Structure probing data (DMS) for a 177-nucleotide construct. The reactions ran in a buffer of 150 mM KOAc, 10 mM MgCl2 and 150 mM bicine (pH 8.5), at 24 C. It was measured as part of the RMDB library M2PK50.
[RMDB]
RNA sequence: GGGAACGACUCGAGUAGAGUCGAAAAUCUCUCUUGUUCGCAAGAGAGAAAAGAACGCCAAACUGACGCAAACUUCCGCGUCAGGAAGGCGAAACGAGGUAAAAAGGGGGAUCUUCGGAUCCCCCAAUCCGUUAAAAAGGUUCGCCUUUUUAACGGAAAAAGAAACAACAACAACAAC
Reactivity to DMS in 0.01 (KOAc 150mM, MgCl2 10mM, bicine 150mM(pH8.5), 24C), signal-to-noise 3, nucleotides 027 to 126: u000c010u000c000u000c000u000u010g010u000u000c170g050c020a000a000g010a000g010a000g000a010a030a080a070g020a090a200c020g030c010c000a020a120a220c000u000g000a000c000g000c010a060a140a200c200u000u010c170c180g010c010g020u000c010a010g000g000a060a220g000g010c000g000a020a050a090c120g000a090g020g010u020a020a050a060a150a120g020g000g010g000g000a010u000c000u000u010c170g030g020a010u000c000c000c000c000c000a000a010